The record gives the reactivity of an RNA of 177 nucleotides to DMS. The reactions ran in a buffer of 150 mM KOAc, 10 mM MgCl2 and 150 mM bicine (pH 8.5), at 24 C.

RNA sequence: GGGAACGACUCGAGUAGAGUCGAAAACGAAGAGAUUGCGGGAUGUGGGUGCAGAGUGGGAAAAUCUGAGUUCGGUCAUCUUUGUUGUUCGUCCUACCGCAGUAUAUUCCUAAACACUAUGAAAUGAUCCCUAAAUCAUGUUCGCAUGAUUUAGGGAAAAAGAAACAACAACAACAAC
Reactivity to DMS in 0.01 (KOAc 150mM, MgCl2 10mM, bicine 150mM(pH8.5), 24C), signal-to-noise 2, nucleotides 027 to 126: c070g010a050a050g010a120g010a090u000u000g020c090g010g000g000a080u000g010u020g010g020g000u000g020c080a050g010a100g020u010g000g010g010a090a050a140a060u010c030u000g000a070g040u000u000c060g020g000u010c100a080u000c020u000u000u020g020u000u000g010u010u000c030g010u000c010c010u000a090c040c010g000c090a040g000u010a040u000a170u000u000c010c000u000a040a040a100c150a060c230u020a090u020g000a040a060a100u010g000a270